[RMDB]
RNA sequence: GGGAACGACUCGAGUAGAGUCGAAAAUGUGACAUGUUCGCAUGUCACAAGCCAGGUAGAUCCUAUCUCAAUUACCUGUACAGGCCAUGGUCUGGAUAGGAAAGCUCUACCUAUUCGUAGGUAGAAACGACGUAAUAUACUUCGGUAUAUUACGUCGAAAAGAAACAACAACAACAAC
Reactivity to DMS in 0.01 (KOAc 150mM, MgCl2 10mM, bicine 150mM(pH8.5), 24C), signal-to-noise 5, nucleotides 027 to 126: u000g010u000g000a010c000a000u000g020u000u010c250g030c010a010u000g000u010c000a000c000a020a070g020c120c050a040g000g010u000a060g010a130u010c020c010u000a070u000c040u000c090a080a100u010u010a080c010c000u000g030u000a090c050a040g000g010c030c040a070u010g040g020u000c060u000g000g000a010u000a010g010g000a090a110a100g010c180u010c000u000a010c000c000u000a010u000u000c120g010u000a000g000g000u000a010g000a010a080a170
Reactivity to 2A3 in 0.01 (KOAc 150mM, MgCl2 10mM, bicine 150mM(pH8.5), 24C), signal-to-noise 6, nucleotides 027 to 126: u060g000u010g000a000c000a000u000g020u040u110c260g000c110a010u000g000u000c000a000c000a000a000g050c020c020a030g030g040u070a060g020a230u140c010c010u060a070u040c040u010c070a070a300u170u100a130c000c000u020g030u040a030c030a040g050g000c030c030a120u270g070g000u010c030u020g020g010a010u020a010g020g000a070a050a000g040c020u000c000u010a000c000c000u000a020u000u050c200g040u020a000g010g000u010a010g000a050a080a020
Source: RMDB library M2PK50, as collected in RNAgym. This 177-nucleotide RNA was probed chemically with DMS and 2A3. 2A3 is a SHAPE reagent: it acylates the 2'-hydroxyl of flexible nucleotides of all four kinds. The RNA was probed in 150 mM KOAc, 10 mM MgCl2 and 150 mM bicine (pH 8.5) at 24 C. Values are in units of 0.01, from 0 to 300, in steps of 10. DMS adducts were read by reverse transcription with MarathonRT.